Chemical mapping of a 177-nucleotide RNA with DMS. The RNA was probed in 150 mM KOAc, 10 mM MgCl2 and 150 mM bicine (pH 8.5) at 24 C. For DMS the reverse transcriptase was MarathonRT.
[RMDB]
RNA sequence: GGGAACGACUCGAGUAGAGUCGAAAAGAUAUGGAUACCAGCGAGUAACCAUCGGAAACGAUGGAAUUACGAUGAGCUGAUCCUAAGUCAAAACACAGUUAAAGGGGUUCGCCCCUUUAACUGUGAACUCACGACGUAACUUCGGUUACGUCGUGAGAAAAGAAACAACAACAACAAC
Reactivity to DMS in 0.01 (KOAc 150mM, MgCl2 10mM, bicine 150mM(pH8.5), 24C), signal-to-noise 1, nucleotides 027 to 126: g010a020u000a300u000g000g020a010u060a170c300c020a010g060c010g040a100g020u000a010a020c000c020a000u000c000g000g020a120a140a210c120g020a020u000g000g020a060a060u000u000a000c010g030a090u020g010a150g060c010u000g000a050u000c000c000u000a020a190g000u020c000a050a100a100a110c060a030c000a000g000u000u000a010a000a000g000g010g010g000u000u000c250g020c000c000c000c000u000u000u000a000a000c000u010g010u000g000a030a070